[RMDB]
Chemical mapping of a 177-nucleotide RNA with 2A3 and DMS.

RNA sequence: GGGAACGACUCGAGUAGAGUCGAAAAUCUUGCUUUGAAGUUUGUCCUAAAUUUGCCCGCCAGAAUGUUGGGCAAGUUGCUCUAACCUCAGGCCAAGAGAAUAAACAGGAAGGACAUUGGAGAUAGCAUCUACAAUUAACUUCGGUUAAUUGUAGAUAAAAGAAACAACAACAACAAC
Reactivity to 2A3 in 0.01 (KOAc 150mM, MgCl2 10mM, bicine 150mM(pH8.5), 24C), signal-to-noise 2, nucleotides 027 to 126: u020c010u010u050g000c020u110u060u090g020a030a020g040u040u040u010g020u030c010c010u050a060a050a060u020u010u010g000c010c000c010g030c040c020a090g120a300a190u140g060u140u110g060g000g000c000a000a000g000u010u030g000c010u000c010u050a040a060c010c010u070c060a080g020g010c040c020a080a010g020a000g040a070a130u140a100a090a020c050a020g110g050a060a020g000g010a020c000a020u020u060g040g020a050g010a020u090a040g040c010
Reactivity to DMS in 0.01 (KOAc 150mM, MgCl2 10mM, bicine 150mM(pH8.5), 24C), signal-to-noise 9, nucleotides 027 to 126: u000c020u000u000g020c020u000u010u000g010a130a140g010u000u000u010g010u000c020c020u000a080a030a060u000u000u000g010c010c000c010g030c090c200a230g020a110a090u010g020u010u000g030g000g000c000a000a010g010u000u000g010c070u010c030u000a080a090c060c030u000c070a060g010g020c060c070a050a040g000a050g000a090a080u010a040a070a100c110a090g000g010a090a040g000g010a050c030a040u000u000g010g000a160g000a090u010a050g010c110
The RNA was probed in 150 mM KOAc, 10 mM MgCl2 and 150 mM bicine (pH 8.5) at 24 C. The 2A3 profile rests on 17,560 reads.